[RMDB]
RNA sequence: GGGAACGACUCGAGUAGAGUCGAAAAGCAACAUCGUAAGCAUAGCCAUGCACCUGUCUCCAGUUCGGAAAAUGGGAGAACUGCCAGUCAUCAUAGCGUGGGCGUUCAGUCAGCCUGCCAUAGUCAAGAUAUUCGGGAAGUUCGCUUCCCGAAUAUCAAAAGAAACAACAACAACAAC
Reactivity to DMS in 0.01 (KOAc 150mM, MgCl2 10mM, bicine 150mM(pH8.5), 24C), signal-to-noise 3, nucleotides 027 to 126: g000c050a070a080c080a080u010c080g020u020a050a120g020c030a050u000a130g010c020c040a070u000g030c040a060c070c050u000g000u000c020u010c080c020a060g020u010u020c050g000g010a030a060a070a090u000g010g000g010a140g000a040a080c070u010g010c050c030a050g020u010c050a030u000c060a070u000a050g030c140g020u010g010g020g000c050g000u000u020c190a080g000u010c040a050g020c040c020u000g010c040c060a090u000a080g010u010c100a070a100
Reactivity to 2A3 in 0.01 (KOAc 150mM, MgCl2 10mM, bicine 150mM(pH8.5), 24C), signal-to-noise 2, nucleotides 027 to 126: g050c020a010a040c000a110u100c080g090u100a030a030g020c020a040u030a040g010c000c030a040u060g020c030a040c040c010u020g010u040c010u000c010c010a060g050u170u100c030g020g070a050a050a060a140u090g050g040g000a070g000a080a030c020u060g010c010c000a020g000u050c000a030u030c010a020u060a030g120c080g080u060g000g080g000c030g000u050u090c020a100g230u000c000a010g000c000c000u020g000c010c000a120u070a050g060u080c020a000a090
Chemical mapping of a 177-nucleotide RNA with DMS and 2A3. DMS adducts were read by reverse transcription with MarathonRT. The data come from the RNA Mapping Database (RMDB), library OK2TST. 2A3 adducts were read by reverse transcription with SuperScript II with manganese. The 2A3 profile rests on 1,909 reads. The DMS profile rests on 2,583 reads.